RNA sequence: GGGAACGACUCGAGUAGAGUCGAAAAUCGGUUGUUUCUCUGAAGGCAUGAUCACCCCGUCCGAUGCGGAAGUUCGUGCUUCCGUCAAACGCGAAAGUCGGACGGCGGCCAUGAGUCGCAACGCAAAUAUACAUUUAGUAGUUCGCUACUAAAUGAAGAUUUCCUCCUUGUUCGCAAGGAGGAAAUCAAAAGAAACAACAACAACAAC
Reactivity to 2A3 in 0.01 (KOAc 150mM, MgCl2 10mM, bicine 150mM(pH8.5), 24C), signal-to-noise 2, nucleotides 027 to 156: u080c060g000g010u000u000g010u000u010u000c050u000c080u110g050a130a000g050g000c000a000u070g030a030u080c040a070c000c030c000c000g000u000c000c000g000a010u000g000c000g030g020a000a010g020u080u300c220g150u300g050c000u010u010c000c000g010u010c030a070a050a010c150g020c040g090a120a050a010g010u000c020g000g020a000c010g000g000c050g000g020c070c000a020u050g020a000g070u100c020g000c090a030a070c060g000c050a000a170a000u180a010u050a090c000a010u000u000u000a010g010u000a000g010u050u000c240g030c060u000a000c010u000a000a000a000u000g000a020a010